Chemical mapping of a 177-nucleotide RNA with 2A3 and DMS. For DMS, 14,790 sequencing reads were counted. It was measured as part of the RMDB library OK2TST. The reactions ran in a buffer of 150 mM KOAc, 10 mM MgCl2 and 150 mM bicine (pH 8.5), at 24 C. High DMS reactivity at an A or C suggests that its Watson-Crick edge is free. Values cover nucleotides 27 to 126.
RNA sequence: GGGAACGACUCGAGUAGAGUCGAAAAGUGGGGGAUCUGGCGCGGUUCAGGGGCUGGAAGGAGAUGGCGCGGGUCUGCGUCCACGAGGUGCGGAACCUCCUCUCGCCGGUCCGUAUGGUGGUGGAGCACAAAAACAAACUUUCGAGUUUGUUUUUGUAAAAGAAACAACAACAACAAC
Reactivity to 2A3 in 0.01 (KOAc 150mM, MgCl2 10mM, bicine 150mM(pH8.5), 24C), signal-to-noise 3, nucleotides 027 to 126: g090u090g010g000g010g000g010a030u030c040u070g040g000c050g020c070g100g010u100u090c040a040g020g020g030g020c030u030g010g050a060a080g140g040a030g010a030u210g020g000c100g010c050g100g000g020u000c010u020g010c020g010u000c020c000a130c120g030a210g000g020u010g000c040g040g040a030a040c000c020u040c020c000u000c000u000c010g010c010c010g010g020u010c000c000g000u080a100u100g030g020u060g000g070u060g020g020a020g020c070
Reactivity to DMS in 0.01 (KOAc 150mM, MgCl2 10mM, bicine 150mM(pH8.5), 24C), signal-to-noise 7, nucleotides 027 to 126: g010u010g000g010g000g010g010a080u000c090u010g010g010c080g020c090g010g010u010u000c120a120g010g010g010g000c030u000g000g000a060a070g000g000a040g000a060u010g020g010c300g020c170g000g010g000u000c030u000g010c010g000u000c010c040a090c290g010a160g010g010u000g010c100g000g010a060a040c010c000u000c010c020u000c020u000c080g010c020c010g000g000u000c010c010g010u000a040u000g010g010u010g010g010u000g000g010a150g020c180